[RMDB]
RNA sequence: GGGAACGACUCGAGUAGAGUCGAAAAACUAGGUGACUUCGGUCACCUAGUAAAAACCGUAGGCGUUUAAAGGGAGAGGACGGUUCGAAAGAGCCGCACCUCGAGGAUCUUUCAAACGCCUAAACGGAAAAAACUCAUCGGUUUCGACCGAUGAGAACCAUGCGUAAUGAUUCGUCAUUACGCAUGGAAAAGAAACAACAACAACAAC
Reactivity to 2A3 in 0.01 (KOAc 150mM, MgCl2 10mM, bicine 150mM(pH8.5), 24C), signal-to-noise 1, nucleotides 027 to 156: a000c010u010a000g000g010u020g000a000c000u020u060c160g010g020u000c000a000c000c000u050a000g010u000a000a000a000a000a000c000c000g000u000a010g000g000c000g010u020u010u020a020a010a000g000g000g010a010g010a000g000g010a010c000g000g030u010u000c000g040a050a090a070g010a000g000c000c000g000c080a300c030c010u000c000g000a000g010g000a000u000c000u030u000u060c130a010a010a000c000g090c000c000u000a000a000a000c000g000g070a050a060a020a000a000a060c000u000c000a000u010c000g000g050u060u100u090c220g070a020c000c000g000a000u000g000a000g000a000a000

Background:
The record gives the reactivity of an RNA of 207 nucleotides to 2A3. The 2A3 profile rests on 1,246 reads. 2A3 adducts were read by reverse transcription with SuperScript II with manganese.